[RMDB]
RNA sequence: GGGAACGACUCGAGUAGAGUCGAAAAAACGCAUUUUCUGCCGAAUUUCUGCUGACGCCCUGGAAAAAGGACGGCAUCCGUGUGCGCGGACGCAUCGAUGCGGAGAUUGUGCAGGCCUGCGUGGUGAGUACCAUGAGUGCUUCGGCACUCAUGGUACAAAAGAAACAACAACAACAAC
Reactivity to 2A3 in 0.01 (KOAc 150mM, MgCl2 10mM, bicine 150mM(pH8.5), 24C), signal-to-noise 1, nucleotides 027 to 126: a000a020c020g030c060a070u080u070u050u040c010u030g030c000c000g030a040a030u000u020u000c010u010g010c030u040g020a030c030g000c010c000c000u000g140g140a200a060a030a020a010g000g030a030c040g030g000c000a030u010c010c010g020u090g090u120g140c270g000c010g080g050a010c010g000c040a030u170c140g020a050u070g000c000g000g020a010g020a020u040u020g160u180g040c000a010g010g030c000c010u020g000c030g000u000g000g040u140g070a050
Reactivity to DMS in 0.01 (KOAc 150mM, MgCl2 10mM, bicine 150mM(pH8.5), 24C), signal-to-noise 1, nucleotides 027 to 126: a110a010c020g000c020a020u000u000u000u020c020u000g000c060c060g010a080a020u010u000u000c000u000g030c030u010g010a300c040g030c000c000c010u000g030g030a160a080a060a100a040g020g000a020c000g010g020c000a060u000c000c000g030u010g030u020g030c260g010c010g000g030a060c050g010c000a060u000c110g000a090u000g000c020g020g010a040g030a060u000u000g000u000g000c030a020g010g020c270c290u000g030c020g010u000g010g000u020g020a260

The record gives the reactivity of an RNA of 177 nucleotides to 2A3 and DMS. 2A3 adducts were read by reverse transcription with SuperScript II with manganese. The RNA was probed in 150 mM KOAc, 10 mM MgCl2 and 150 mM bicine (pH 8.5) at 24 C. It was measured as part of the RMDB library OK2TST.